[RMDB]
RNA sequence: GGGAACGACUCGAGUAGAGUCGAAAAAGGAGACUGCUGGACCCGCCGCCCAAGUUCGAGCAUGGGCCAAUUCCGAACGAAGAGACGCGAGACGGGAGAGAUCAGCGCCCGAGAGGGGUAAAUGGUAAAGAGCAUUGGAACGCCGAGGGGACACCUCCAUACUGAUGGAGUUCGCUCCAUCAGUAUGAAAAGAAACAACAACAACAAC
Reactivity to 2A3 in 0.01 (KOAc 150mM, MgCl2 10mM, bicine 150mM(pH8.5), 24C), signal-to-noise 1, nucleotides 027 to 156: a010g060g010a060g000a090c100u080g080c010u020g030g010a070c000c010c010g060c030c030g040c020c000c010a080a050g050u060u120c030g060a060g050c110a090u130g020g000g070c010c000a020a110u120u000c030c030g050a030a030c030g050a100a050g030a040g020a090c070g040c010g050a070g040a080c030g010g000g020a030g000a000g000a070u150c020a030g020c020g090c090c030c000g070a080g010a030g090g010g010g000u030a050a000a130u100g030g000u080a100a100a000g060a010g020c060a140u080u090g030g010a040a020c060g030c050c030g020a020g050g020g000g020a030c000a030c060c010u000c000